[RMDB]
RNA sequence: GGGAACGACUCGAGUAGAGUCGAAAAAUAGCAUUGGAGAAGCCUCAAGCCCCAUUGCCUAUCUGGUUUUUGUCACUACACUCACUAGUGAUUAUACGAUUACAGUCUUUGUUACUGUCAACCUUGCGAGGGGCUCGGUUCGCCGAGCCCAAAAGAAACAACAACAACAAC
Reactivity to 2A3 in 0.01 (KOAc 150mM, MgCl2 10mM, bicine 150mM(pH8.5), 24C), signal-to-noise 4, nucleotides 027 to 129: a000u180a070g040c120a000u000u100g010g010a150g030a080a050g130c000c000u060c010a030a010g000c000c010c000c000a130u000u060g000c040c000u150a170u140c110u120g080g000u100u050u000u060u150g000u000c000a000c000u010a000c030a020c060u030c060a090c070u020a010g000u000g020a000u090u000a030u000a040c100g010a000u260u040a000c000a000g000u010c040u050u300u260g070u040u070a000c010u000g000u010c020a030a000c000c000u000u030g020c010g050a030g000